[RMDB]
RNA sequence: GGGAACGACUCGAGUAGAGUCGAAAAGUGGUCAGCCUGGUCCUGACCAGACUCACAGGGACACCUCCUCCAAGCCCUGGGCCCCUUCCUGGGAACGUGGCUGUGGGCCUGGAGCUCCUGGGCAGGGCGAAAAGGCAAGCUUCGGCUUGCCUUUUCGAAAAGAAACAACAACAACAAC
Reactivity to DMS in 0.01 (KOAc 150mM, MgCl2 10mM, bicine 150mM(pH8.5), 24C), signal-to-noise 1, nucleotides 027 to 126: g040u010g010g000u010c010a040g030c060c070u010g030g030u030c140c040u010g000a030c030c010a040g020a120c070u000c060a050c030a080g010g000g000a140c140a140c050c020u010c050c010u010c020c060a110a120g010c010c030c030u000g000g000g000c050c010c020c050u000u000c010c050u020g000g020g020a030a050c100g000u000g000g000c000u010g000u040g020g020g040c010c000u000g000g000a040g000c030u000c060c080u000g000g010g000c100a030g000g010g010
The data come from the RNA Mapping Database (RMDB), library OK2TST. This 177-nucleotide RNA was probed chemically with DMS. Reactivities are given for positions 27 through 126.